[RMDB]
RNA sequence: GGGAACGACUCGAGUAGAGUCGAAAAUUAUAAGGACACUGAUUCUAUCAGAUGAGGGUCCCUAGCUGGGUUUAAGAAGUGCAAUAUUUAAACAAAAGCCAUGAACUUUGUAAGCCCAGUGUGUAAACUUGUAUAUGCACUUCGGUGCAUAUACAAGAAAAGAAACAACAACAACAAC
Reactivity to 2A3 in 0.01 (KOAc 150mM, MgCl2 10mM, bicine 150mM(pH8.5), 24C), signal-to-noise 5, nucleotides 027 to 126: u140u060a100u060a210a030g010g000a030c080a030c300u010g010a010u060u030c040u110a180u180c080a030g010a030u020g020a010g010g020g000u000c000c010c000u010a000g000c000u000g010g000g020u030u040u050a070a010g000a010a000g020u010g090c010a050a030u060a170u170u220u170a250a150a020c070a030a120a030a000g070c020c030a040u040g030a020a010c010u020u010u040g060u050a010a000g000c000c000c000a010g000u030g010u010g020u060a070a060a080
Reactivity to DMS in 0.01 (KOAc 150mM, MgCl2 10mM, bicine 150mM(pH8.5), 24C), signal-to-noise 4, nucleotides 027 to 126: u040u090a090u020a130a150g000g000a050c030a100c030u000g010a170u000u020c040u030a100u020c280a130g000a020u010g000a280g000g000g020u010c010c000c050u010a120g020c000u010g000g000g000u000u000u000a030a120g000a010a000g000u010g000c050a070a090u020a090u040u010u030a100a120a150c180a110a100a090a130g040c200c230a100u020g000a080a020c000u000u000u020g010u010a030a040g000c000c000c000a010g000u000g040u010g000u030a070a050a170

The record gives the reactivity of an RNA of 177 nucleotides to 2A3 and DMS. For DMS the reverse transcriptase was MarathonRT. The reactions ran in a buffer of 150 mM KOAc, 10 mM MgCl2 and 150 mM bicine (pH 8.5), at 24 C.